[RMDB]
RNA sequence: GGGAACGACUCGAGUAGAGUCGAAAAUCGGACCGCGGGGAGGUGGAGAUGCCAUGCCGACCCGAAGAGGAAAGAAGGACUCGGACGCGAACCCGUAAGGUGAAACUUUCACAUUUAUUGGGGAGUACUUAUGAAUAGAGUUCGCUCUAUUCAUAAGAAAAGAAACAACAACAACAAC
Reactivity to 2A3 in 0.01 (KOAc 150mM, MgCl2 10mM, bicine 150mM(pH8.5), 24C), signal-to-noise 3, nucleotides 027 to 126: u050c000g010g020a020c030c000g000c040g020g010g010g000a030g030g000u050g000g040a140g000a070u140g090c020c010a040u090g000c000c020g030a030c000c000c000g010a030a010g050a030g040g010a070a020a020g030a000a010g020g000a030c010u020c060g000g030a030c050g000c020g040a040a050c000c000c020g010u020a020a010g040g000u020g030a060a060a100c050u100u140u050c040a040c020a110u040u040u110a060u110u180g010g000g000g010a030g010u010a070
Reactivity to DMS in 0.01 (KOAc 150mM, MgCl2 10mM, bicine 150mM(pH8.5), 24C), signal-to-noise 5, nucleotides 027 to 126: u010c060g000g010a300c050c040g010c040g010g000g010g000a160g000g030u000g020g010a150g010a110u010g010c050c040a070u000g020c020c010g000a230c030c010c020g000a060a050g000a170g020g000a050a080a070g010a060a050g000g000a070c070u000c070g000g010a070c080g010c030g010a120a190c020c000c010g000u000a020a020g010g030u000g000a020a100a140c250u010u010u000c010a030c030a040u010u000u000a040u010u010g010g000g000g010a170g010u000a120